[RMDB]
RNA sequence: GGGAACGACUCGAGUAGAGUCGAAAACAGCCUGCAUCUGACCUCGAUGUGCCUCCAAUAUCGCCCCACGGUCGUAGCCUGUUUCUGCAUUUACCUAGCCUGCAAGUGGUCCCGAUGGGAGAUCCCAGCAUGGGACCACUUUCGAGUGGUCCCAUGCAAAAGAAACAACAACAACAAC
Reactivity to DMS in 0.01 (KOAc 150mM, MgCl2 10mM, bicine 150mM(pH8.5), 24C), signal-to-noise 4, nucleotides 027 to 126: c100a130g000c060c020u000g010c050a070u010c050u010g000a090c050c020u000c070g010a100u010g010u000g010c030c020u000c050c060a090a100u020a080u000c070g020c050c010c010c060a100c090g000g010u010c040g020u000a090g020c020c010u000g010u000u010u020c020u000g020c060a070u010u000u000a090c050c040u000a080g000c030c010u010g000c100a050a060g000u000g010g010u000c000c020c010g010a120u010g000g000g010a170g010a100u010c010c010c010a080
Reactivity to 2A3 in 0.01 (KOAc 150mM, MgCl2 10mM, bicine 150mM(pH8.5), 24C), signal-to-noise 1, nucleotides 027 to 126: c020a020g040c000c030u060g000c020a070u050c020u040g120a150c000c030u010c030g030a080u110g050u070g080c000c010u020c010c000a040a040u060a020u090c040g050c000c000c000c000a050c030g080g030u100c040g010u020a020g010c010c020u010g030u030u080u000c020u040g030c010a050u070u000u030a020c010c000u000a020g020c000c010u020g060c030a100a040g020u010g030g020u040c040c000c010g060a070u060g030g010g000a100g050a050u070c010c010c010a010